The data come from the RNA Mapping Database (RMDB), library TTRDEL. The record gives the reactivity of an RNA of 177 nucleotides to DMS and 2A3. The DMS profile rests on 13,441 reads. For DMS the reverse transcriptase was MarathonRT. For 2A3 the reverse transcriptase was SuperScript II with manganese. The RNA was probed in 150 mM KOAc, 10 mM MgCl2 and 150 mM bicine (pH 8.5) at 24 C.
RNA sequence: GGGAACGACUCGAGUAGAGUCGAAAAGAUAUGGAAGUUGGCGAAGAACAUCACGUAACAUCUGUCGGAAACGACAGUGGUGAUGGGAGCCAAUUCCUAAGUCAAAAUCUCAACUUCGGUUGAGAAACCUGUAUAAUUAGUUCGCUAAUUAUACAGGAAAAGAAACAACAACAACAAC
Reactivity to DMS in 0.01 (KOAc 150mM, MgCl2 10mM, bicine 150mM(pH8.5), 24C), signal-to-noise 8, nucleotides 027 to 126: g010a050u010a300u000g000g000a010a020g010u000u000g010g010c000g000a110a170g000a110a170c000a000u000c000a000c010g010u000a040a060c190a020u010c000u000g000u000c000g000g000a110a080a160c010g000a000c000a000g020u000g010g010u000g010a010u000g000g000g000a120g010c000c000a000a030u000u000c000c000u000a050a150g010u000c030a060a060a090a150u000c000u000c000a010a000c000u000u010c200g020g000u000u000g000a010g000a020a070a090
Reactivity to 2A3 in 0.01 (KOAc 150mM, MgCl2 10mM, bicine 150mM(pH8.5), 24C), signal-to-noise 8, nucleotides 027 to 126: g010a020u070a040u120g000g050a040a050g300u110u050g030g000c050g160a300a040g010a150a020c000a000u000c000a000c010g060u100a100a020c040a250u230c020u010g000u000c010g030g000a100a050a060c010g010a000c000a000g000u010g000g010u000g000a000u000g000g010g020a000g000c000c000a000a000u010u000c000c000u010a140a010g030u020c020a030a030a120a300u020c000u000c000a000a010c000u070u090c300g140g000u010u010g010a010g000a080a010a030